Description:
Structure probing data (2A3 and DMS) for a 207-nucleotide construct. For 2A3, 1,203 sequencing reads were counted. For 2A3 the reverse transcriptase was SuperScript II with manganese.
RNA sequence: GGGAACGACUCGAGUAGAGUCGAAAAGCUGUUCCAGAGUGUGAGGACUCUGAACUCGAAGGUAGAUGACCUCCUCACAGGUCAAAGUGAUAUUGAUAGGCAAGUAUCAGGAUCACACUACCGACAUACUUGUCUAUGUCAACUCGAGGAACAGAGAAAAUAAUAAAAUCUUCGGAUUUUAUUAUUUAAAAGAAACAACAACAACAAC
Reactivity to 2A3 in 0.01 (KOAc 150mM, MgCl2 10mM, bicine 150mM(pH8.5), 24C), signal-to-noise 2, nucleotides 027 to 156: g020c010u010g010u010u020c020c010a010g020a020g050u040g000u010g030a010g000g020a030c000u020c000u060g080a110a070c030u050c110g090a090a060g050g020u080a020g030a240u080g020a020c000c000u000c000c000u020c020a010c010a010g030g030u040c040a090a050a040g060u060g040a040u060a020u170u060g020a010u010a010g090g040c070a080a020g020u020a010u020c040a050g060g000a040u120c030a020c010a040c070u130a090c020c000g000a000c010a030u010a000c000u090u080g020u050c010u030a010u010g030u010c030a040a040c030u000c030g020a100g000g000a040a030c000a000g030a000g010a030
Reactivity to DMS in 0.01 (KOAc 150mM, MgCl2 10mM, bicine 150mM(pH8.5), 24C), signal-to-noise 2, nucleotides 027 to 156: g010c020u010g010u000u000c020c020a130g000a130g010u000g000u000g030a090g000g020a130c030u010c050u000g020a100a140c040u000c030g010a030a150g000g010u000a070g020a300u000g020a050c020c020u000c010c050u000c110a140c070a100g040g020u010c020a040a070a180g020u010g010a070u000a070u010u000g000a050u000a050g030g010c090a040a060g000u010a010u000c020a190g020g000a060u000c070a060c060a210c050u000a100c020c010g010a130c170a030u000a010c020u000u000g010u010c010u000a020u010g010u000c000a080a080c070u000c010g010a130g010g000a030a090c010a000g000a300g010a150